[RMDB]
Chemical mapping of a 177-nucleotide RNA with 2A3 and DMS. 2A3 adducts were read by reverse transcription with SuperScript II with manganese. The RNA was probed in 150 mM KOAc, 10 mM MgCl2 and 150 mM bicine (pH 8.5) at 24 C.

RNA sequence: GGGAACGACUCGAGUAGAGUCGAAAACUUCUGGUGUUCGCACCAGAAGAAAUCCGUACUCGAGGCGCCAGUCGAGAGAUAUUGUGGCUGUUCCCUGCCGGAAAACCGCUCCCUUCGGGGAGCGGAAUCAAUCCCAUAAGUUCGCUUAUGGGAUUGAAAAAGAAACAACAACAACAAC
Reactivity to 2A3 in 0.01 (KOAc 150mM, MgCl2 10mM, bicine 150mM(pH8.5), 24C), signal-to-noise 2, nucleotides 027 to 126: c000u000u010c000u000g020g000u000g030u040u060c250g100c050a010c020c010a000g020a000a000g000a000a010a000u000c010c020g010u000a000c010u000c000g030a010g200g090c080g030c040c010a000g040u060c050g030a040g000a000g020a090u020a060u230u240g090u110g070g000c020u000g000u000u000c000c000c010u010g110c080c040g110g020a070a050a030a030c000c000g000c010u010c000c000c000u050u040c150g000g020g000g010a020g040c000g010g020a010a000
Reactivity to DMS in 0.01 (KOAc 150mM, MgCl2 10mM, bicine 150mM(pH8.5), 24C), signal-to-noise 3, nucleotides 027 to 126: c000u000u000c000u000g000g030u010g020u000u010c270g030c000a000c010c010a000g000a020a000g010a010a080a170u000c010c010g010u000a020c010u000c000g000a030g000g020c180g010c030c030a030g010u000c020g000a150g000a190g000a040u000a080u000u000g020u000g000g000c010u000g000u000u000c000c000c010u000g010c080c100g000g010a090a060a120a120c010c000g040c010u000c000c000c000u000u000c200g020g000g010g010a010g020c000g000g000a000a020
Reactivities are given for positions 27 through 126.